[RMDB]
RNA sequence: GGGAACGACUCGAGUAGAGUCGAAAACAGCGUACCUUCGGGUACGCUGAAAACUAAAACAAAUGCAAAGCCCGAUACGGCAAAUCGAGCGAAAAGAAUAAGAAAGUAGGUGGUUCGCCACCUACAAUCUAUUAUACGACUUCGGUCGUAUAAUAGAAAAAGAAACAACAACAACAAC
Reactivity to DMS in 0.01 (KOAc 150mM, MgCl2 10mM, bicine 150mM(pH8.5), 24C), signal-to-noise 2, nucleotides 027 to 126: c000a010g000c000g030u000a000c010c000u000u000c160g050g010g020u000a000c010g020c000u000g000a010a010a060a160c100u020a030a060a050a130c110a090a130a040u010g020c060a120a220a170g010c020c000c000g030a030u000a040c100g000g020c120a070a140a030u000c040g000a060g010c000g020a030a080a110a100g010a070a100u010a100a120g000a130a060a160g020u000a010g020g020u000g010g010u000u030c190g010c000c000a000c000c000u000a000c000a020a040
Reactivity to 2A3 in 0.01 (KOAc 150mM, MgCl2 10mM, bicine 150mM(pH8.5), 24C), signal-to-noise 2, nucleotides 027 to 126: c010a010g020c020g000u000a020c010c000u020u050c200g080g020g000u000a000c000g020c000u000g000a000a000a000a010c020u060a050a000a060a020c050a080a050a020u160g070c040a100a140a130g000c010c010c000g050a040u060a230c100g010g080c100a010a300a000u070c040g010a000g010c030g040a010a080a040a040g080a030a160u160a110a060g130a130a120a000g010u000a000g000g040u000g000g040u030u020c110g030c030c000a000c000c000u000a000c000a000a000

Chemical mapping of a 177-nucleotide RNA with DMS and 2A3. For 2A3, 1,870 sequencing reads were counted. Values cover nucleotides 27 to 126. For 2A3 the reverse transcriptase was SuperScript II with manganese. The DMS profile rests on 1,741 reads.